Source: RMDB library VIROID, as collected in RNAgym. This 177-nucleotide RNA was probed chemically with 2A3 and DMS. For DMS, 52,112 sequencing reads were counted. For DMS the reverse transcriptase was MarathonRT. The 2A3 profile rests on 30,631 reads. Conditions: 150 mM KOAc, 10 mM MgCl2 and 150 mM bicine (pH 8.5), 24 C. Values cover nucleotides 27 to 126.
[RMDB]
RNA sequence: GGGAACGACUCGAGUAGAGUCGAAAAGCAAGGAGAACUCACCUGUCGUCGUCGACGAAGGCAUGUGAGCUUCAAUCUCCGUGAAGAGCGUCAGCGGACGGCCUCUGAGACGAGCGAUGGACAGUAGCUCGUAUAGUAAGUUCGCUUACUAUACGAGAAAAGAAACAACAACAACAAC
Reactivity to 2A3 in 0.01 (KOAc 150mM, MgCl2 10mM, bicine 150mM(pH8.5), 24C), signal-to-noise 9, nucleotides 027 to 126: g050c040a050a100g040g010a040g040a100a060c010u020c030a030c020c010u010g000u010c010g010u000c010g040u050c080g030a200c040g010a070a030g020g000c020a020u070g030u030g020a020g010c010u060u020c010a020a090u010c010u000c010c000g020u030g030a100a040g030a010g040c050g040u050c050a030g070c060g130g030a030c020g040g010c010c000u020c010u030g040a050g010a040c030g010a020g060c030g040a050u070g050g020a020c030a070g090u090a030g030
Reactivity to DMS in 0.01 (KOAc 150mM, MgCl2 10mM, bicine 150mM(pH8.5), 24C), signal-to-noise 9, nucleotides 027 to 126: g010c100a100a100g010g010a050g010a050a190c020u000c010a030c020c020u000g010u000c000g010u000c010g010u010c240g010a190c100g010a030a030g010g010c000a010u000g010u000g000a030g000c180u000u000c150a100a140u000c010u000c010c020g010u000g010a110a060g010a060g020c080g010u000c040a080g010c070g010g000a060c050g010g000c050c020u000c030u000g010a230g010a050c050g000a050g010c050g010a070u000g010g010a080c120a080g010u010a100g010